[RMDB]
RNA sequence: GGGAACGACUCGAGUAGAGUCGAAAAGCACUGAACUUGCCGGAGGAGGACUUCGCCCAGACUUAUGGACGCGUCAAGCCGGCCGUCGAUGCGGUCUUGAUCUUCUCGUGCAAGGCGGGAGGACGCGGCCGCGCUAGCUCUUCGGAGCUAGCGCGGCAAAAGAAACAACAACAACAAC
Reactivity to 2A3 in 0.01 (KOAc 150mM, MgCl2 10mM, bicine 150mM(pH8.5), 24C), signal-to-noise 1, nucleotides 027 to 126: g150c040a030c070u200g130a140a000c000u110u080g010c020c000g050g010a010g000g080a110g180g000a000c020u110u050c060g010c000c000c000a170g070a130c000u140u060a000u240g050g000a000c000g050c120g080u010c020a000a000g000c000c000g010g030c000c000g080u060c020g010a010u130g010c000g000g000u070c060u000u230g090a300u000c050u030u000c070u000c020g000u000g010c060a170a080g140g000c080g000g030g000a000g000g000a000c010g000c060g170